About this RNA
This 177-nucleotide RNA was probed chemically with 2A3 and DMS. Conditions: 150 mM KOAc, 10 mM MgCl2 and 150 mM bicine (pH 8.5), 24 C. The DMS profile rests on 2,205 reads. It was measured as part of the RMDB library OK2TST.
RNA sequence: GGGAACGACUCGAGUAGAGUCGAAAAGUGAAAGUAAAAUAACGAGCAACGAUCUCCAACUCACCCCAAGAGGAGAUGCAGAUCCUCAAUAUGGAUACCAAGGUUCGUGGACACUCAGUUGGGAAAAGGUAGCUAAUAGUUUCGACUAUUAGCUACCAAAAGAAACAACAACAACAAC
Reactivity to 2A3 in 0.01 (KOAc 150mM, MgCl2 10mM, bicine 150mM(pH8.5), 24C), signal-to-noise 2, nucleotides 027 to 126: g120u130g040a110a050a060g110u180a070a090a040a180u110a130a000c040g000a020g010c030a020a040c060g030a040u010c000u000c040c000a050a120c030u010c060a140c010c000c010c030a000a000g060a020g010g010a010g000a000u010g000c000a030g030a080u020c000c000u050c010a070a070u220a070u170g000g070a020u070a120c040c020a060a070g080g000u030u010c030g020u030g000g080a020c030a000c060u030c020a070g040u090u070g070g020g050a000a100a080a040
Reactivity to DMS in 0.01 (KOAc 150mM, MgCl2 10mM, bicine 150mM(pH8.5), 24C), signal-to-noise 3, nucleotides 027 to 126: g010u000g030a070a130a110g000u010a050a070a070a070u000a120a090c060g010a090g010c080a130a140c140g000a090u010c000u000c020c020a030a170c120u010c080a180c100c000c020c060a060a050g010a170g040g010a050g010a010u000g000c100a100g000a040u000c080c000u000c130a050a090u000a150u000g010g010a060u010a090c100c100a040a240g000g010u000u000c020g010u010g000g000a070c130a060c050u000c050a080g010u000u000g000g010g050a060a050a080a100